RNA sequence: GGGAACGACUCGAGUAGAGUCGAAAAAAGGGGCAGCAUCAGGAGUAGAACCCAAGUGUUUGUGUUCUGAUUCCCAAGACAGCUUAUGACGUUUUGGAAACUCUGAAUCUGAUGGGUGACAGAAACUUGGGGAUCAUCUCUAGAUAAGAAAGGGAGAGUAAUUUAUGCUGUUCGCAGCAUAAAUUACAAAAGAAACAACAACAACAAC
Reactivity to 2A3 in 0.01 (KOAc 150mM, MgCl2 10mM, bicine 150mM(pH8.5), 24C), signal-to-noise 4, nucleotides 027 to 156: a000a000g050g000g010g000c050a050g000c010a030u080c050a040g040g030a030g000u090a040g040a030a030c020c030c000a040a040g060u040g080u140u200u080g100u030g060u040u000c010u010g020a050u040u030c020c000c000a000a000g020a030c020a010g030c040u240u150a130u300g030a060c050g030u020u020u110u050g040g020a060a060a050c050u050c040u070g040a110a100u040c020u040g030a090u100g050g000g040u050g040a030c010a060g040a030a060a030c010u010u010g010g000g000g030a030u050c010a050u000c000u010c010u030a030g000a170u080a110a060g080a130a040a030g040g020g000a050g000a010
Reactivity to DMS in 0.01 (KOAc 150mM, MgCl2 10mM, bicine 150mM(pH8.5), 24C), signal-to-noise 1, nucleotides 027 to 156: a040a100g000g020g010g030c060a050g030c050a090u000c040a140g030g000a110g060u000a130g010a110a140c030c060c020a040a140g030u000g020u020u000u050g030u020g020u000u030c030u000g010a090u000u000c010c000c000a040a020g020a070c020a070g020c090u010u010a070u010g030a040c040g030u030u010u000u010g020g000a050a060a060c060u000c050u000g030a090a090u010c080u000g030a180u010g020g030g040u000g000a180c020a030g000a030a040a050c010u000u010g000g010g010g000a090u000c030a040u010c000u000c020u000a060g010a300u010a030a060g030a050a090a040g020g010g010a060g000a220